[RMDB]
RNA sequence: GGGAACGACUCGAGUAGAGUCGAAAACUUCAGAAAACAUCCUCCGCGGUCUCGAGGAACUCUCCUCCGACUCACGCAUACCCCUCGCCGGGGCAUACUUUUAUGGGAGCUGUAAAACUAGCACACCCGAGCCGCCCUCGGACAAGGCGCCCGGCGACGCAAUUGGUAAUUUCGAUUACCAAUUGCGAAAAGAAACAACAACAACAAC
Reactivity to 2A3 in 0.01 (KOAc 150mM, MgCl2 10mM, bicine 150mM(pH8.5), 24C), signal-to-noise 1, nucleotides 027 to 156: c070u120u100c120a050g080a040a140a010a030c010a180u020c030c040u070c100c100g000c000g090g010u000c020u090c050g040a040g030g000a080a080c060u050c000u000c080c000u010c010c030g040a000c010u070c080a080c000g060c010a070u170a290c020c000c030c020u010c010g000c000c000g000g000g040g000c000a010u100a080c010u000u220u230u150a140u260g030g000g020a080g020c030u050g030u130a010a100a050a200c090u080a040g000c030a020c000a020c170c020c010g010a040g010c020c010g020c030c000c000u030c030g030g020a030c020a060a030g000g000c010g040c000c000c000g000g060c040g000a000

This 207-nucleotide RNA was probed chemically with 2A3. For 2A3 the reverse transcriptase was SuperScript II with manganese. Values are in units of 0.01, from 0 to 300, in steps of 10.